[RMDB]
This 177-nucleotide RNA was probed chemically with DMS. DMS adducts were read by reverse transcription with MarathonRT. Reactivities are given for positions 27 through 126. It was measured as part of the RMDB library OK2TRN. The reactions ran in a buffer of 150 mM KOAc, 10 mM MgCl2 and 150 mM bicine (pH 8.5), at 24 C.

RNA sequence: GGGAACGACUCGAGUAGAGUCGAAAAUUGCUCUAGUUUUUCGGGCCUUUCACAGCAGCCAUCUCAUCAUCUUGCAUCCCCUAGCAAUUGACGUUAAUGGGCCCCUCUUGCAUGGAUUGAGCUGAUCACUAGCGGGUAGAUUCGUCUACCCGCUAGUAAAAGAAACAACAACAACAAC
Reactivity to DMS in 0.01 (KOAc 150mM, MgCl2 10mM, bicine 150mM(pH8.5), 24C), signal-to-noise 2, nucleotides 027 to 126: u010u000g010c010u010c030u000a100g000u000u010u000u020u030c080g030g000g040c020c040u000u010u000c070a060c100a110g010c000a110g020c040c020a080u000c030u000c050a060u000c050a030u020c070u000u010g020c110a120u000c050c000c010c080u000a070g030c020a080a060u010u000g020a070c120g020u000u000a060a110u000g010g000g000c020c000c030c050u000c020u010u010g000c070a110u000g000g010a170u000u000g010a070g030c040u010g000a110u000c120